[RMDB]
This 177-nucleotide RNA was probed chemically with 2A3 and DMS. The data come from the RNA Mapping Database (RMDB), library M2PK90. The RNA was probed in 150 mM KOAc, 10 mM MgCl2 and 150 mM bicine (pH 8.5) at 24 C. High DMS reactivity at an A or C suggests that its Watson-Crick edge is free. The DMS profile rests on 1,718 reads. Values cover nucleotides 27 to 126. For 2A3 the reverse transcriptase was SuperScript II with manganese. The 2A3 profile rests on 3,282 reads.

RNA sequence: GGGAACGACUCGAGUAGAGUCGAAAAAAAACGAGCGUAAUCGCGUCUUGACUAGACUGUUAGUGACGUGUGUAGGGAUCUAUCCCAGUGUGCAUAGCGCACAAUACGCUGAUUAACAGUCACGGAAAGAUGAUUUCUCUUUCGAGAGAAAUCAUCUAAAAGAAACAACAACAACAAC
Reactivity to 2A3 in 0.01 (KOAc 150mM, MgCl2 10mM, bicine 150mM(pH8.5), 24C), signal-to-noise 3, nucleotides 027 to 126: a000a000a000a000c080g020a050g000c010g020u050a100a150u140c030g020c000g110u050c050u090u120g060a050c030u040a070g000a010c010u000g020u000u020a060g030u020g050a030c030g010u000g000u030g040u090a110g000g000g010a020u000c050u160a180u080c040c000c010a040g040u030g000u010g000c050a130u150a200g050c050g020c040a000c020a030a000u030a010c010g020c020u020g020a020u010u030a000a010c000a010g000u010c050a010c060g060g030a120a120
Reactivity to DMS in 0.01 (KOAc 150mM, MgCl2 10mM, bicine 150mM(pH8.5), 24C), signal-to-noise 2, nucleotides 027 to 126: a010a040a040a110c090g020a060g010c070g010u000a060a070u000c030g000c020g000u000c030u000u000g010a180c090u000a110g010a010c020u010g040u000u000a020g030u000g000a010c140g020u000g000u010g020u010a140g010g010g000a080u000c190u010a130u010c010c000c010a140g030u000g010u000g020c000a200u010a140g030c070g030c010a010c000a100a040u000a010c000g020c040u000g010a050u020u000a020a000c020a000g000u000c030a100c260g000g000a070a090